[RMDB]
RNA sequence: GGGAACGACUCGAGUAGAGUCGAAAACUGGUUACCAGCGACAGGCAUGGUGGAAGCGAUGUGGGUUGUGCUCUUAGAAGAAACCGUGGUCCACGCAUUGCUAGUAUUCGAAGAGUUCAAUGCCGAAGAGGGUACCGAGGUUCGCCUCGGUACCCUCAAAAGAAACAACAACAACAAC
Reactivity to 2A3 in 0.01 (KOAc 150mM, MgCl2 10mM, bicine 150mM(pH8.5), 24C), signal-to-noise 1, nucleotides 027 to 126: c000u000g000g010u150u180a050c000c000a090g030c000g120a120c100a040g000g100c000a090u050g000g000u000g000g170a140a000g060c090g000a010u000g030u050g040g040g040u180u090g040u190g040c000u100c000u040u060a010g000a010a000g000a030a060a000c010c010g030u000g000g170u030c000c000a120c120g100c000a090u000u300g000c010u000a050g030u000a050u000u090c030g130a010a010g000a000g000u000u010c030a140a000u060g030c040c040g000a090a000
Structure probing data (2A3) for a 177-nucleotide construct. As a SHAPE reagent, 2A3 marks flexible, mostly unpaired nucleotides at the ribose 2'-OH. The reactions ran in a buffer of 150 mM KOAc, 10 mM MgCl2 and 150 mM bicine (pH 8.5), at 24 C. Reactivities are given for positions 27 through 126.